[RMDB]
Background
Structure probing data (2A3 and DMS) for a 177-nucleotide construct. For 2A3 the reverse transcriptase was SuperScript II with manganese. The 2A3 profile rests on 2,450 reads. Conditions: 150 mM KOAc, 10 mM MgCl2 and 150 mM bicine (pH 8.5), 24 C.
RNA sequence: GGGAACGACUCGAGUAGAGUCGAAAACAAUCGUCCAUGAUCCUUGACGAGACAGGUAAAGCAGAUAUCAAAUGCUGCAGCUCUCUCCACGUCGAGGAACUGGCUGCUUUACCUAUGCGGGGUAUCGCGCAUGCAGUCGAUUCGUCGACUGCAUGCGAAAAGAAACAACAACAACAAC
Reactivity to 2A3 in 0.01 (KOAc 150mM, MgCl2 10mM, bicine 150mM(pH8.5), 24C), signal-to-noise 4, nucleotides 027 to 126: c060a040a160u130c040g070u020c020c030a050u100g000a050u030c000c040u040u030g030a050c030g000a020g050a020c040a010g010g040u030a040a030a030g000c010a000g080a050u120a040u280c150a020a080a180u260g020c050u010g040c010a030g030c000u020c000u000c010u020c050c030a160c100g130u120c100g020a030g000g040a030a070c000u000g000g010c000u030g010c000u010u020u020a020c000c020u020a100u090g040c050g000g020g000g020u060a020u090c030g010
Reactivity to DMS in 0.01 (KOAc 150mM, MgCl2 10mM, bicine 150mM(pH8.5), 24C), signal-to-noise 1, nucleotides 027 to 126: c100a060a010u010c170g040u000c000c060a030u010g030a050u000c020c080u000u020g000a010c070g000a300g000a050c170a040g050g030u000a000a080a020g000c000a030g000a040u050a180u020c070a090a040a050u020g050c020u060g000c060a010g010c040u000c020u010c010u050c010c110a130c140g000u050c170g030a020g020g010a000a030c000u020g020g010c000u000g000c000u000u000u000a030c000c010u010a080u040g000c130g010g000g010g000u000a020u000c010g010
High 2A3 reactivity points to a flexible backbone, as in loops and unpaired stretches.